[RMDB]
RNA sequence: GGGAACGACUCGAGUAGAGUCGAAAAUGGUUGUCUUCGGACAACCAAAAAAACCUUUGUGGACUAAGAGCGAUAAGAAUGUCAUUCCCAUUGGGAAUGAACAUUCUUUUGACGCUCGAAGUCCACUCUGGUAAAAACGUAGGUUUCGACCUACGAAUGAGUACUAAAUGUUCGCAUUUAGUACUCAAAAAGAAACAACAACAACAAC
Reactivity to 2A3 in 0.01 (KOAc 150mM, MgCl2 10mM, bicine 150mM(pH8.5), 24C), signal-to-noise 2, nucleotides 027 to 156: u060g010g000u000u000g010u000c030u040u050c300g020g000a010c010a000a010c000c020a030a000a000a000a000a000a000c000c000u030u000u010g000u000g000g010a000c000u000a070a000g000a000g000c000g020a040u000a110a000g010a000a000u010g010u000c000a000u010u000c000c040c030a220u260u300g000g000g000a010a000u000g000a010a020c000a010u010u000c000u010u030u000u010g020a000c000g000c010u000c000g000a000a000g000u000c000c000a000c000u000c000u000g000g000u070a170a030a000a000a000c010g000u010a000g000g020u090u050u120c210g080a050c000c000u000a000c000g010a030a070
Reactivity to DMS in 0.01 (KOAc 150mM, MgCl2 10mM, bicine 150mM(pH8.5), 24C), signal-to-noise 2, nucleotides 027 to 156: u000g010g020u000u000g000u000c000u000u010c300g040g010a050c000a010a010c000c000a000a000a030a070a050a040a050c000c000u000u000u000g000u000g000g010a020c000u000a040a300g000a030g030c010g020a160u000a040a020g030a020a010u000g000u000c000a020u010u000c000c000c020a300u000u010g070g020g010a020a010u000g010a030a010c000a020u000u000c010u000u000u000u000g010a250c010g030c010u010c000g000a140a020g010u000c000c010a000c000u000c000u000g020g000u000a020a070a020a080a070c020g010u010a010g020g010u000u000u000c300g010a120c000c000u000a010c010g000a060a090